[RMDB]
RNA sequence: GGGAACGACUCGAGUAGAGUCGAAAAGAUAUGGAGCUAGGUACAGACAUGCUGGAGAAGGGUCGGAAACGACCCGUAACAGCAACAGCUGUACUAGCUCCUAAGUCAAACGCGGGUUCGCCCGCGAGCGUUGUAUAAUGUUCGCAUUAUACAACGCAAAAGAAACAACAACAACAAC
Reactivity to 2A3 in 0.01 (KOAc 150mM, MgCl2 10mM, bicine 150mM(pH8.5), 24C), signal-to-noise 3, nucleotides 027 to 126: g040a010u080a050u150g000g000a000g010c010u030a040g170g300u050a010c000a000g080a040c030a170u090g000c010u020g020g000a040g020a020a030g000g000g000u000c000g010g040a080a100a050c010g000a020c020c000c000g000u000a000a000c010a000g060c010a030a010c050a020g040c000u000g000u010a000c000u000a000g000c000u000c000c000u000a000a000g000u000c010a050a070a060c000g000c020g000g000g060u090u120c300g120c060c000c000g010c000g020a030
Reactivity to DMS in 0.01 (KOAc 150mM, MgCl2 10mM, bicine 150mM(pH8.5), 24C), signal-to-noise 4, nucleotides 027 to 126: g000a050u000a300u010g000g010a020g020c000u000a000g030g030u000a010c020a000g000a060c100a260u010g010c000u000g000g000a110g010a180a250g010g010g010u000c000g020g000a090a100a250c000g000a010c000c000c000g000u000a040a250c010a010g030c000a010a040c290a160g000c000u010g010u000a020c000u000a000g010c000u000c010c000u000a000a050g000u010c030a080a110a210c020g010c010g000g000g000u000u020c300g010c010c000c000g000c010g010a050
This 177-nucleotide RNA was probed chemically with 2A3 and DMS. The DMS profile rests on 3,798 reads. Source: RMDB library TTRDES, as collected in RNAgym.